RNA sequence: GGGAACGACUCGAGUAGAGUCGAAAAGAUAUGGACUGGUGAUGCUGGCGGUCGGAAACGACCGGCCAGCUAAUCACCGUCCUAAGUCAAACGUAUGCUUCAUCACUUCGGUGAUGAAGCAUACGAAGUCAUUACGAUAGUUCGCUAUCGUAAUGACAAAAGAAACAACAACAACAAC
Reactivity to DMS in 0.01 (KOAc 150mM, MgCl2 10mM, bicine 150mM(pH8.5), 24C), signal-to-noise 5, nucleotides 027 to 126: g000a030u000a300u000g000g000a020c010u010g040g010u000g000a020u000g010c000u000g000g010c010g000g010u000c010g000g000a060a070a220c000g010a010c000c000g010g030c000c000a000g000c000u000a010a030u000c000a000c000c000g010u000c010c000u000a010a090g010u000c030a110a130a280c000g010u000a000u000g000c000u000u000c000a010u000c000a000c000u000u010c190g020g010u000g000a000u000g000a000a000g000c000a000u000a010c000g010a060a090
Reactivity to 2A3 in 0.01 (KOAc 150mM, MgCl2 10mM, bicine 150mM(pH8.5), 24C), signal-to-noise 2, nucleotides 027 to 126: g020a010u050a040u150g010g000a010c120u290g020g000u010g020a010u110g000c010u000g000g020c040g020g000u010c020g020g040a100a110a060c010g010a010c000c010g020g030c000c010a000g050c000u010a000a010u000c000a000c000c000g000u000c000c000u000a050a020g050u020c030a110a040a050c010g010u010a000u010g020c000u000u000c010a000u000c000a010c000u070u150c300g120g000u000g010a000u000g000a000a000g000c010a000u000a000c000g000a000a000
The record gives the reactivity of an RNA of 177 nucleotides to DMS and 2A3.
Values are in units of 0.01, from 0 to 300, in steps of 10.
For DMS, 9,033 sequencing reads were counted.
Source: RMDB library TTRDEL, as collected in RNAgym.
DMS adducts were read by reverse transcription with MarathonRT.